Overview:
Source: RMDB library OK1LIB, as collected in RNAgym. Chemical mapping of a 177-nucleotide RNA with 2A3 and DMS. DMS (dimethyl sulfate) methylates the pairing face of unpaired adenines and cytosines. Reactivities are rounded to 0.1 and cut off at 0 and 3. 2A3 adducts were read by reverse transcription with SuperScript II with manganese. Reactivities are given for positions 27 through 126. The RNA was probed in 150 mM KOAc, 10 mM MgCl2 and 150 mM bicine (pH 8.5) at 24 C.
RNA sequence: GGGAACGACUCGAGUAGAGUCGAAAAACAGGCUAUAAGCCUAGAGUAUGCUACAGUCACUUAAGCACAAGCUACAGUAUAUGAGCUAAAAAGAGAGAAUAUAUGCUAUGGUUGGCAUUUAACCAUCCAGAUAAAUAGCGUUCGCGCUAUUUAUCUGAAAAGAAACAACAACAACAAC
Reactivity to 2A3 in 0.01 (KOAc 150mM, MgCl2 10mM, bicine 150mM(pH8.5), 24C), signal-to-noise 9, nucleotides 027 to 126: a000c030a010g010g000c020u040a030u080a300a070g000c000c000u010a010g010a010g050u130a050u140g030c010u060a130c040a060g030u050c040a050c100u080u120a070a030g020c040a070c050a140a020g000c000u110a100c040a020g070u050a060u030a050u230g060a010g000c040u120a030a050a010a140a030g170a010g030a010g060a130a030u180a030u040a020u150g010c040u050a040u100g080g020u020u030g050g010c100a130u070u070u080a030a000c020c010a020u030c030
Reactivity to DMS in 0.01 (KOAc 150mM, MgCl2 10mM, bicine 150mM(pH8.5), 24C), signal-to-noise 6, nucleotides 027 to 126: a110c120a040g000g010c020u000a090u010a090a070g040c010c020u000a050g000a110g020u010a060u010g000c020u020a100c140a080g000u010c080a070c050u020u010a100a090g000c060a060c140a090a080g000c000u000a070c120a040g030u010a050u020a030u010g000a050g010c000u020a030a070a030a100a120g020a130g020a110g000a090a050u020a050u010a040u000g010c020u000a060u020g000g000u000u000g000g030c050a060u010u030u010a080a050c030c020a090u020c130